[RMDB]
RNA sequence: GGGAACGACUCGAGUAGAGUCGAAAAAAGAAGUUAGAGCUUACCUAGGAAUCUCUUCUGCUUGUGACGGUCUUGCUUCAGCUUAUAGGGCGAAUUCCUUUGAUGUACCUACAUUCUGCGCAAACCGCAGGAACACAUGCUUCGGCAUGUGUUCCUGAAAAGAAACAACAACAACAAC
Reactivity to DMS in 0.01 (KOAc 150mM, MgCl2 10mM, bicine 150mM(pH8.5), 24C), signal-to-noise 1, nucleotides 027 to 126: a090a050g000a020a080g000u000u000a120g010a050g000c170u000u000a130c030c050u030a130g020g000a070a070u020c040u000c040u000u000c010u000g000c120u010u000g030u010g000a110c080g010g050u020c170u000u000g020c030u040u000c050a080g000c090u000u000a030u000a080g000g010g020c100g010a080a160u000u000c120c150u020u000u020g010a130u000g000u000a020c030c000u010a000c100a060u000u000c030u000g000c300g010c100a030a030a060c100c020g000